[RMDB]
This 307-nucleotide RNA was probed chemically with DMS and 2A3. 2A3 adducts were read by reverse transcription with SuperScript II with manganese. The RNA was probed in 150 mM KOAc, 10 mM MgCl2 and 150 mM bicine (pH 8.5) at 24 C.
RNA sequence: GGGAACGACUCGAGUAGAGUCGAAAAGAAGAUCGGUGACGAUCUUCACCUCUAUACGUGAGUAUAGAGGAGAAUCGCGUGAGCGAUUCACUAUAAUACUUCGGUAUUAUAGACGCACCGGUGACGGUGCGAACCAACCGUUCGCGGUUGGACUCGGUAUCUACGGAUACCGAGAAGGAGAGUAGAUGAUUCGCGUUAAGUGUGUGUGAAUGGGAUGUCGUCACACAACGAAGCGAGAGCGCGGUGAAUCAUUGCAUCCGCUCCAUAGGCACUCGUUCGCGAGUGCCAAAAGAAACAACAACAACAAC
Reactivity to DMS in 0.01 (KOAc 150mM, MgCl2 10mM, bicine 150mM(pH8.5), 24C), signal-to-noise 2, nucleotides 027 to 266: g010a000a000g010a000u010c000g000g000u020g000a130c000g000a010u000c020u000u000c030a160c000c000u000c010u000a010u000a000c000g000u040g000a210g000u000a000u000a000g010a000g010g010a130g010a000a000u000c000g020c000g000u030g000a300g010c010g000a000u000u010c010a270c020u000a000u000a000a000u000a010c000u000u030c150g020g010u010a010u010u010a000u000a010g000a300c040g020c000a020c010c010g040g000u010g010a130c000g000g010u000g050c000g010a110a190c040c010a010a010c010c010g000u000u010c260g050c030g000g000u020u000g010g010a170c020u000c000g010g000u000a000u000c000u000a090c150g010g000a000u000a010c010c000g010a000g000a150a110g010g010a020g000a020g010u030a300g000a000u010g000a030u000u000c000g000c000g000u010u020a030a070g020u010g020u000g000u010g000u000g000a030a060u000g000g040g010a010u000g020u000c230g000u010c000a010c000a000c000a030a060c070g000a060a040g020c010g000a200g000a140g070c000g020c070g020g010u010g000a020a010u010c020a010u000u000g000c000a000u000c000c010g000c000u000c010c000a180u000a130
Reactivity to 2A3 in 0.01 (KOAc 150mM, MgCl2 10mM, bicine 150mM(pH8.5), 24C), signal-to-noise 2, nucleotides 027 to 266: g010a000a000g000a000u000c030g040g080u130g060a060c010g010a000u010c010u000u000c010a010c010c000u000c000u000a000u010a000c030g060u060g150a080g010u010a000u010a000g000a000g000g000a090g000a010a000u000c000g000c020g050u080g070a080g000c000g010a000u010u000c000a000c000u000a000u000a000a000u010a000c000u000u060c190g060g000u000a010u010u010a010u000a010g070a040c000g000c000a000c010c000g010g040u090g020a020c000g000g010u000g010c000g000a040a040c000c000a000a000c000c010g020u040u090c300g040c020g110g000u010u010g000g010a040c000u000c000g000g000u000a000u010c000u010a040c290g070g000a000u000a000c000c000g000a000g000a000a010g010g000a000g000a000g000u020a000g000a010u010g000a000u000u010c000g000c000g000u020u080a020a010g010u010g000u010g000u000g000u000g030a010a030u000g000g010g000a000u010g040u110c130g000u000c050a000c000a000c000a000a000c020g010a020a010g000c010g010a030g000a020g030c020g000c000g000g060u010g000a000a010u000c010a010u000u010g000c000a000u000c000c000g000c000u000c000c010a070u140a090
The 2A3 profile rests on 4,498 reads.
DMS adducts were read by reverse transcription with MarathonRT.
Values cover nucleotides 27 to 266.